[RMDB]
RNA sequence: GGGAACGACUCGAGUAGAGUCGAAAAAGCAGAAUUGGAUCCGAUGAACCACCCACCGAAUGGCUUGGCUGAGCGUCAAGUGUCAUAAAAAAAUAGGAACAACACUUGCAAGCCAAAAACUAAAGUGCACGAGUUGCUGGCCAUGUGGCUCUUCACAGCAUUAAUAGCCAUUCGUGGCUAUUAAUGCAAAAGAAACAACAACAACAAC
Reactivity to DMS in 0.01 (KOAc 150mM, MgCl2 10mM, bicine 150mM(pH8.5), 24C), signal-to-noise 2, nucleotides 027 to 156: a090g020c060a140g010a140a110u000u000g040g020a110u000c000c000g000a140u010g010a020a050c030c040a130c040c090c000a090c050c030g010a100a140u030g010g050c040u010u000g050g020c020u020g020a110g060c110g000u030c010a020a010g040u010g000u000c020a200u020a010a010a030a090a090a050a250u010a130g020g000a140a080c050a020a030c000a000c010u000u000g030c070a120a040g020c000c020a020a040a040a050a070c040u010a010a050a020g020u000g020c040a090c140g010a170g010u010u010g000c030u010g000g000c040c040a080u000g020u000g030g010c030u010c020u000u000c020a080c030a210
Reactivity to 2A3 in 0.01 (KOAc 150mM, MgCl2 10mM, bicine 150mM(pH8.5), 24C), signal-to-noise 3, nucleotides 027 to 156: a020g060c080a050g040a150a070u140u100g020g070a070u050c120c090g080a080u110g040a040a050c030c000a030c040c040c000a060c020c080g050a090a060u080g000g010c040u050u050g020g010c030u080g090a080g090c060g100u120c030a010a000g010u000g000u040c130a100u300a070a020a020a000a000a020a090u170a120g150g020a050a040c080a020a000c000a000c000u000u030g000c030a000a030g000c020c000a060a070a000a020a020c110u200a120a050a010g040u060g070c050a000c030g050a050g010u080u050g020c030u040g020g010c000c010a040u110g050u040g030g010c040u020c010u060u100c050a020c010a050
Background: This 207-nucleotide RNA was probed chemically with DMS and 2A3. For DMS, 2,749 sequencing reads were counted. For 2A3 the reverse transcriptase was SuperScript II with manganese. For 2A3, 1,272 sequencing reads were counted. High 2A3 reactivity points to a flexible backbone, as in loops and unpaired stretches.